[RMDB]
Structure probing data (2A3) for a 207-nucleotide construct. The RNA was probed in 150 mM KOAc, 10 mM MgCl2 and 150 mM bicine (pH 8.5) at 24 C. It was measured as part of the RMDB library M2RFOK.
RNA sequence: GGGAACGACUCGAGUAGAGUCGAAAACGCAAAGCUGCAGCGCGGCGCUCUGGAGGCCUUGCCCCGCGCACUGCUCUUUACAUGGCCCGACGUGAGGGCACUUCGCGGUCAGUGCUGCGGCCUCGUGAAACUGCCCCUAAGUUCGCUUAGGGGCAAACUCUGAAUAUCGCUUCGGCGAUAUUCAGAGAAAAGAAACAACAACAACAAC
Reactivity to 2A3 in 0.01 (KOAc 150mM, MgCl2 10mM, bicine 150mM(pH8.5), 24C), signal-to-noise 1, nucleotides 027 to 156: c020g010c010a010a000a000g000c000u010g010c000a000g010c000g000c020g010g000c050g030c070u080c170u190g050g000a010g030g080c070c130u110u120g000c020c000c000c000g010c010g000c070a080c090u090g000c000u040c090u150u250u180a110c100a150u070g070g010c030c030c050g120a140c060g000u020g040a270g000g000g000c030a040c000u010u030c000g010c040g020g110u060c050a100g000u010g040c000u000g000c010g000g000c000c000u010c000g010u000g020a110a040a000c030u050g000c000c000c000c000u010a010a000g010u020u110c120g010c110u000u000a000g000g060g000g000c000a000a000a010